Source information
The record gives the reactivity of an RNA of 177 nucleotides to 2A3 and DMS. For DMS, 4,767 sequencing reads were counted. For 2A3, 2,266 sequencing reads were counted.
[RMDB]
RNA sequence: GGGAACGACUCGAGUAGAGUCGAAAAUACGCGAGGUUCGCCUCGCGUAAAAGAGGAGCGUAAACGUGAGCGUACGUAGUGCUGUACAUCGUUCCUAGACGAAUGCACAUGGUUUCGACCAUGUGAAUGAUAAAAACAGCUUCGGCUGUUUUUAUCAAAAAGAAACAACAACAACAAC
Reactivity to 2A3 in 0.01 (KOAc 150mM, MgCl2 10mM, bicine 150mM(pH8.5), 24C), signal-to-noise 2, nucleotides 027 to 126: u050a000c000g000c000g000a000g000g010u080u120c180g090c010c020u000c000g030c000g000u000a010a000a010a010g140a010g030g030a030g020c000g020u140a040a100a120c070g030u030g100a050g130c090g070u120a030c080g100u130a030g130u090g040c020u030g060u070a030c010a040u040c020g010u000u020c000c010u020a060g040a040c070g070a110a050u250g010c010a000c000a010u000g000g000u060u100u130c220g060a020c020c000a000u010g000u000g010a020a040
Reactivity to DMS in 0.01 (KOAc 150mM, MgCl2 10mM, bicine 150mM(pH8.5), 24C), signal-to-noise 4, nucleotides 027 to 126: u010a010c010g010c000g010a010g000g010u000u020c240g040c010c000u000c000g000c010g000u010a000a010a070a100g010a090g010g010a060g000c010g010u000a050a080a050c090g000u000g000a110g020c240g020u000a050c090g020u010a120g000u010g000c010u010g010u010a060c090a120u000c000g000u000u000c000c000u010a050g010a130c200g010a070a080u020g000c010a010c000a000u010g000g000u000u000u010c170g010a020c000c000a010u000g000u000g000a020a060
High DMS reactivity at an A or C suggests that its Watson-Crick edge is free.
Reactivities are given for positions 27 through 126.
The reactions ran in a buffer of 150 mM KOAc, 10 mM MgCl2 and 150 mM bicine (pH 8.5), at 24 C.